[RMDB]
RNA sequence: GGGAACGACUCGAGUAGAGUCGAAAAGCAUAAAGCGAUGCAGGAAGUGUUGCAGCAGUUUGCUCACGUCAAGGAUUUUGUCUGGUGCCAGGAAGAGCCGCUCAACCAGGGCGCAUGGUACUGCAGCGCGCCGUUAAAAGUUCGCUUUUAACGGCGCAAAAGAAACAACAACAACAAC
Reactivity to 2A3 in 0.01 (KOAc 150mM, MgCl2 10mM, bicine 150mM(pH8.5), 24C), signal-to-noise 1, nucleotides 027 to 126: g060c010a080u180a160a240a000g050c010g080a030u070g000c000a020g090g070a190a080g060u000g020u240u300g020c000a000g010c030a050g020u090u170u100g010c010u000c020a020c040g060u050c050a050a100g100g010a140u040u020u080u300g050u010c020u040g030g000u050g000c010c010a000g030g040a040a070g030a040g070c110c020g000c030u020c020a040a030c080c030a040g010g010g000c000g000c000a020u040g000g010u050a030c040u040g000c020a010g000c020
Reactivity to DMS in 0.01 (KOAc 150mM, MgCl2 10mM, bicine 150mM(pH8.5), 24C), signal-to-noise 2, nucleotides 027 to 126: g000c030a110u000a080a080a070g020c030g020a030u010g000c010a080g010g000a170a180g020u000g010u010u000g020c040a120g030c060a120g040u000u010u000g020c000u000c020a060c090g000u000c020a060a080g030g010a110u000u030u000u040g000u000c030u030g000g010u010g020c030c050a100g000g010a040a150g020a100g010c100c090g010c060u000c100a060a190c070c140a090g000g000g020c020g020c000a020u000g000g020u000a090c030u010g000c030a060g020c100

An RNA of 177 nucleotides, treated with 2A3 and DMS and read out base by base. It was measured as part of the RMDB library OK2TST. The reactions ran in a buffer of 150 mM KOAc, 10 mM MgCl2 and 150 mM bicine (pH 8.5), at 24 C. High 2A3 reactivity points to a flexible backbone, as in loops and unpaired stretches. The DMS profile rests on 1,098 reads.